[RMDB]
RNA sequence: GGGAACGACUCGAGUAGAGUCGAAAAAUGGCAUGCCGCACCUGAUGCAGCCUAACAUCACCAUUCCAGCGGACACUAGUGCCAUCAUCAGUCACCAGAACACGGGAUGGACGAUGCGUCACUACGAGCUAUUAUCGCGUUUCGACGCGAUAAUAGCAAAAGAAACAACAACAACAAC
Reactivity to DMS in 0.01 (KOAc 150mM, MgCl2 10mM, bicine 150mM(pH8.5), 24C), signal-to-noise 3, nucleotides 027 to 126: a060u000g000g040c060a040u000g040c010c040g020c040a090c060c050u000g000a040u000g030c080a050g020c000c040u000a060a120c090a000u030c010a100c180c080a120u000u000c120c050a070g050c060g020g010a080c230a100c140u010a010g030u010g030c010c000a040u010c020a020u000c040a090g030u020c030a140c020c010a090g000a110a080c150a140c150g020g000g000a020u000g000g040a030c080g020a010u000g000c070g010u000c030a040c040u030a050c180g000a110
Reactivity to 2A3 in 0.01 (KOAc 150mM, MgCl2 10mM, bicine 150mM(pH8.5), 24C), signal-to-noise 3, nucleotides 027 to 126: a000u110g000g000c040a040u070g030c030c020g020c020a080c030c040u030g020a040u040g000c030a040g060c000c020u030a050a030c000a030u020c020a000c020c030a080u130u030c020c020a040g010c050g050g020a010c030a030c090u020a010g010u000g040c030c020a030u030c000a010u010c000a010g030u010c020a060c240c000a040g090a170a050c090a010c160g040g000g020a010u050g060g000a020c050g020a010u050g040c040g090u140c010a000c050u100a050c060g090a020